[RMDB]
RNA sequence: GGGAACGACUCGAGUAGAGUCGAAAAUUUUCUGUCCUGAACCGAUCUUUAGAUAAGCGAGGUAACGUGUGCGGAAACAGCCUGGACCGUUCCCGUUGGAUGACCUUCAAGUGGAGAUGCUACUUCCUGACAGAGAUGCUAACGUUCGAUGCCGCACCACCCAUACUUGGUUCGCCAAGUAUGGGUGAAAAGAAACAACAACAACAAC
Reactivity to 2A3 in 0.01 (KOAc 150mM, MgCl2 10mM, bicine 150mM(pH8.5), 24C), signal-to-noise 3, nucleotides 027 to 156: u120u090u030u000c030u030g060u030c020c020u050g040a030a020c030c030g060a080u110c030u050u130u110a130g030a100u180a250a010g020c050g030a020g050g000u060a100a010c060g010u030g010u050g040c030g020g030a040a140a030c040a040g050c010c000u070g030g000a030c000c000g000u020u020c010c000c000g000u010u020g040g040a090u080g040a050c000c000u040u040c060a160a040g020u050g090g030a070g000a040u090g030c020u020a070c030u040u050c000c000u020g010a000c010a060g040a010g020a060u040g010c030u080a040a010c020g030u040u040c030g020a020u050g030c000c000g000c000a000c000
Reactivity to DMS in 0.01 (KOAc 150mM, MgCl2 10mM, bicine 150mM(pH8.5), 24C), signal-to-noise 1, nucleotides 027 to 156: u010u000u000u000c040u000g030u000c050c040u000g060a100a070c050c050g000a160u000c010u010u000u000a090g020a160u030a010a110g010c090g010a140g020g010u000a030a080c020g020u000g060u000g040c060g000g000a120a110a060c040a100g020c090c020u020g030g000a060c060c030g010u020u010c000c000c020g000u000u000g000g000a090u000g000a090c070c000u000u000c050a100a150g010u000g020g020a120g020a090u000g020c010u000a040c110u000u000c020c020u020g020a160c030a110g020a190g020a140u000g000c070u000a090a110c070g000u000u010c060g010a130u000g020c010c010g000c030a180c040